RNA sequence: GGGAACGACUCGAGUAGAGUCGAAAAGAAAGAAAGAAAGCGGUUGGGUGGGUCCAUCGACCGUCGUGGCGUAUUGGGACGCUUUACCACGACGCGAGGAAAUAGCGAGACCGACCACCCCCUUUAACAGAGGUAUAGUAGUUCGCUACUAUACCAACAACUAGUAACCGUUCGCGGUUACUAGUUGAAAAGAAACAACAACAACAAC
Reactivity to 2A3 in 0.01 (KOAc 150mM, MgCl2 10mM, bicine 150mM(pH8.5), 24C), signal-to-noise 3, nucleotides 027 to 156: g030a030a050a000g030a000a070a000g070a010a110a000g110c100g070g100u220u110g120g010g040u040g040g030g040u000c030c010a080u090c020g020a040c040c000g000u010c010g000u000g020g010c100g050u110a100u080u190g050g010g040a030c030g030c050u090u080u070a060c010c000a000c000g000a030c000g000c010g000a050g000g140a050a060a140u100a070g050c060g010a040g030a030c030c010g030a030c030c000a000c010c000c020c000c000u020u110u080a110a060c070a020g080a070g120g000u000a010u000a000g000u000a000g000u030u070c190g000c070u000a000c000u000a010u000a000c000c000a000a000
Reactivity to DMS in 0.01 (KOAc 150mM, MgCl2 10mM, bicine 150mM(pH8.5), 24C), signal-to-noise 2, nucleotides 027 to 156: g000a250a090a090g010a150a030a120g000a090a090a110g020c090g070g000u000u000g020g040g050u010g010g030g000u010c010c020a050u000c070g000a070c160c030g000u000c000g020u000g020g040c040g010u000a160u010u020g000g000g000a190c080g010c040u000u000u010a080c010c010a090c000g010a030c010g010c010g010a100g000g020a020a090a080u010a080g000c070g010a210g000a100c010c000g010a030c000c010a040c020c010c000c020c010u010u000u010a060a160c110a200g010a130g000g000u000a010u010a010g010u000a030g030u000u000c290g010c000u020a000c000u000a010u000a000c010c000a030a050
Overview:
This 207-nucleotide RNA was probed chemically with 2A3 and DMS.